This 177-nucleotide RNA was probed chemically with DMS and 2A3. Reactivities are given for positions 27 through 126. The DMS profile rests on 15,586 reads. 2A3 adducts were read by reverse transcription with SuperScript II with manganese. The RNA was probed in 150 mM KOAc, 10 mM MgCl2 and 150 mM bicine (pH 8.5) at 24 C.
RNA sequence: GGGAACGACUCGAGUAGAGUCGAAAAAUGUGGCCCCUGUCCCAGCAGUGACCCCACCCUGACUCUCCAGGUCAUGGAGGGUCUUGUCAUGGCGGAGGUCAGUGGUGAUGUAGCUCGUUACAUUCCGCUGAAUCAGAGAAUUCGUUCUCUGAUUCAGAAAAGAAACAACAACAACAAC
Reactivity to DMS in 0.01 (KOAc 150mM, MgCl2 10mM, bicine 150mM(pH8.5), 24C), signal-to-noise 7, nucleotides 027 to 126: a070u010g010u000g010g010c010c020c020c030u000g010u000c020c060c040a230g000c030a050g010u000g010a070c040c120c010c010a090c050c010c090u000g000a010c000u000c020u010c080c080a090g020g010u010c180a070u000g010g000a150g010g010g010u000c020u000u010g010u010c110a130u010g000g010c030g000g000a070g020g010u000c020a030g020u010g000g010u010g010a040u010g010u000a080g010c070u000c110g010u000u000a040c090a100u000u000c030c040g000
Reactivity to 2A3 in 0.01 (KOAc 150mM, MgCl2 10mM, bicine 150mM(pH8.5), 24C), signal-to-noise 4, nucleotides 027 to 126: a020u170g030u080g040g010c030c000c000c000u020g050u040c000c000c010a020g010c000a020g030u030g060a030c010c000c000c010a130c020c030c010u000g000a000c000u040c010u010c200c030a060g100g030u090c050a060u040g010g010a030g020g040g010u010c010u010u040g010u010c020a030u090g000g030c020g020g030a060g010g010u010c020a010g020u050g080g030u090g030a050u040g020u040a010g020c040u000c120g060u060u010a050c020a080u050u030c020c020g000